Background:
Chemical mapping of a 207-nucleotide RNA with 2A3. Source: RMDB library OK3TST, as collected in RNAgym. The 2A3 profile rests on 899 reads.

[RMDB]
RNA sequence: GGGAACGACUCGAGUAGAGUCGAAAACGCAUGCGAGAGCAUGCGGCUAAGCUUCGGCUUAGUAAGAGGAACUUAGGAUUUUAGGCUCCCCGGCGUGUCUCGAACAAUGCCGGGCCAAACCCAUAGGGCUGGCGGUCCCUGUGCGGUCACAAUUCAAAUCCCCUAGCUGAUUCGUCAGCUAGGGGAUAAAAGAAACAACAACAACAAC
Reactivity to 2A3 in 0.01 (KOAc 150mM, MgCl2 10mM, bicine 150mM(pH8.5), 24C), signal-to-noise 1, nucleotides 027 to 156: c000g000c000a000u010g000c000g030a010g000a000g050c000a000u010g000c000g020g000c010u000a000a000g000c000u000u100c290g100g000c000u000u000a000g000u070a120a010g050a040g090g040a030a010c040u090u020a130g110g010a140u030u080u030u120a020g050g000c010u160c040c020c000c000g000g000c000g020u030g010u020c060u000c190g120a090a020c020a040a100u090g000c000c000g000g000g010c010c000a040a020a000c000c000c000a000u020a010g020g010g000c030u030g060g080c040g000g040u060c000c000c000u000g020u000g060c050g010g020u050c030a000c030a050a180u160u100c000a120a000